Conditions: 150 mM KOAc, 10 mM MgCl2 and 150 mM bicine (pH 8.5), 24 C. An RNA of 170 nucleotides, treated with 2A3 and DMS and read out base by base. It was measured as part of the RMDB library 15KLIB. For DMS the reverse transcriptase was MarathonRT. 2A3 adducts were read by reverse transcription with SuperScript II with manganese.

[RMDB]
RNA sequence: GGGAACGACUCGAGUAGAGUCGAAAAUUAUGAACUAGAGAAGCACUGUUACGACUUGUUACGUGACUGUGAUGCUGUAGCUCCCCAUGAUUUCUUCAUCUUUGAUGUAGACAAAGUUAAAACACCUAAAGGCCGAUGUUCGCAUCGGCCAAAAGAAACAACAACAACAAC
Reactivity to 2A3 in 0.01 (KOAc 150mM, MgCl2 10mM, bicine 150mM(pH8.5), 24C), signal-to-noise 2, nucleotides 027 to 129: u130u030a040u140g020a100a010c000u000a020g000a010g000a260a000g000c010a010c000u010g010u020u020a010c020g100a040c070u050u180g120u220u200a040c040g020u010g000a000c000u000g050u070g010a030u130g030c020u000g010u000a000g000c000u080c000c000c000c000a030u040g010a060u000u010u150c010u010u000c010a020u000c020u020u050u300g010a000u000g010u000a010g000a010c110a000a060a000g010u010u040a030a010a000a140c060a070c050c030u090a170a000a000
Reactivity to DMS in 0.01 (KOAc 150mM, MgCl2 10mM, bicine 150mM(pH8.5), 24C), signal-to-noise 1, nucleotides 027 to 129: u000u060a050u040g040a080a080c050u010a000g000a000g020a060a050g000c020a000c000u010g000u020u020a040c040g020a230c020u030u060g010u050u010a000c000g030u000g000a010c010u010g040u020g010a070u000g010c010u000g000u000a000g020c080u000c000c100c000c010a060u000g000a060u000u030u020c030u020u020c020a020u030c050u030u000u090g030a040u040g010u030a060g000a100c230a080a040a070g030u070u030a030a060a080a090c050a110c120c030u150a100a000a110